Structure probing data (DMS and 2A3) for a 177-nucleotide construct.
The reactions ran in a buffer of 150 mM KOAc, 10 mM MgCl2 and 150 mM bicine (pH 8.5), at 24 C.
For DMS, 4,331 sequencing reads were counted.
For 2A3 the reverse transcriptase was SuperScript II with manganese.

RNA sequence: GGGAACGACUCGAGUAGAGUCGAAAAUUAAACGAGGAGGAGGAGUGUGUGUCUUCCCAGCUGCUGAGUAGAACCUCCGCACACACGCGAAAGCUACGAGCAGCAGCAGUGCGGAAACGGUGAAAAACAUAUGUAUUCGCUUCGGCGAAUACAUAUGAAAAGAAACAACAACAACAAC
Reactivity to DMS in 0.01 (KOAc 150mM, MgCl2 10mM, bicine 150mM(pH8.5), 24C), signal-to-noise 5, nucleotides 027 to 126: u010u000a050a060a100c080g000a060g010g000a050g010g000a060g000g010a100g010u000g010u000g020u000g000u000c080u000u000c010c010c000a200g000c020u000g010c020u000g000a130g010u000a040g000a050a120c080c040u000c060c010g020c000a050c090a110c170a080c180g010c040g010a060a170a100g000c020u000a050c080g000a120g010c040a060g000c060a040g020c000a060g000u010g000c060g000g010a040a050a060c110g020g010u000g000a050a040a050a070a160
Reactivity to 2A3 in 0.01 (KOAc 150mM, MgCl2 10mM, bicine 150mM(pH8.5), 24C), signal-to-noise 2, nucleotides 027 to 126: u090u060a060a020a000c010g020a040g030g040a030g030g010a010g030g010a040g030u100g020u010g000u020g020u030c050u030u000c000c000c010a010g000c010u040g000c000u030g010a020g060u070a020g030a060a020c000c020u020c000c000g000c000a040c010a000c000a010c060g010c020g050a110a040a010g010c010u050a030c130g100a070g130c020a000g010c000a000g000c020a020g030u030g040c040g010g000a060a100a040c050g000g030u090g020a060a070a030a000a030